[RMDB]
RNA sequence: GGGAACGACUCGAGUAGAGUCGAAAAUGAAAGCCAAAAUUUUUGCACUAAGGAACUUCUAUUCAGGUUUGUGACUCCCUAUGACCAGCUACAACCCAGAAUAUUGAAUGAGUUCAGCGGGGAUCGCGAUUAAUUGGUGUUUCGACACCAAUUAAUCAAAAGAAACAACAACAACAAC
Reactivity to 2A3 in 0.01 (KOAc 150mM, MgCl2 10mM, bicine 150mM(pH8.5), 24C), signal-to-noise 3, nucleotides 027 to 126: u080g020a050a040a010g040c010c030a020a060a100a110u110u220u070u200u180g070c040a040c070u040a030a070g120g000a070a020c010u110u030c020u080a100u040u040c020a030g040g070u010u080u110g070u030g020a040c030u060c040c010c010u010a120u130g090a070c000c030a000g030c010u010a020c020a040a010c000c000c000a010g050a140a060u120a100u110u170g040a090a080u100g010a030g030u050u030c020a020g020c050g030g020g000g010a020u090c050g000c030
Reactivity to DMS in 0.01 (KOAc 150mM, MgCl2 10mM, bicine 150mM(pH8.5), 24C), signal-to-noise 6, nucleotides 027 to 126: u010g010a080a100a120g020c050c060a040a050a090a120u000u010u010u010u000g020c050a080c090u010a090a120g010g000a050a010c030u000u000c050u000a040u000u000c040a050g020g010u000u000u000g020u000g010a090c060u000c040c030c050u000a080u020g010a070c090c060a030g010c040u000a040c070a020a040c020c010c030a130g010a040a070u000a060u010u010g010a070a080u010g010a060g010u000u000c040a060g020c070g000g010g010g000a080u000c120g020c190
Chemical mapping of a 177-nucleotide RNA with 2A3 and DMS. The RNA was probed in 150 mM KOAc, 10 mM MgCl2 and 150 mM bicine (pH 8.5) at 24 C. For DMS, 6,674 sequencing reads were counted. It was measured as part of the RMDB library OK2TRN. For 2A3, 3,023 sequencing reads were counted.